RNA sequence: GGGAACGACUCGAGUAGAGUCGAAAAGAUAUGGACCCUAGCAAGUCUCGCCGAUCGAAGAACUGUCUGCUCGGAAACGAGCAGACAGGGAGAUCGGUCCGAGAUGAUGACCUAGGGUCCUAAGUCACUUGUGCUGUUAGUUCGCUAACAGCACAAGAAAAGAAACAACAACAACAAC
Reactivity to DMS in 0.01 (KOAc 150mM, MgCl2 10mM, bicine 150mM(pH8.5), 24C), signal-to-noise 1, nucleotides 027 to 126: g080a010u010a300u000g000g010a000c000c000c000u000a000g020c050a050a150g010u000c000u000c030g000c060c000g010a020u000c000g000a120a150g030a300a290c000u000g000u010c020u010g020c000u000c000g000g000a050a050a190c000g030a050g000c000a000g000a000c000a070g000g000g000a060g000a020u000c000g000g000u010c190c070g040a000g000a000u020g020a080u030g010a300c300c000u010a010g000g000g040u000c000c000u000a000a130g000u000c020a200
The data come from the RNA Mapping Database (RMDB), library TTRINS. Structure probing data (DMS) for a 177-nucleotide construct. Reactivities are given for positions 27 through 126. For DMS the reverse transcriptase was MarathonRT.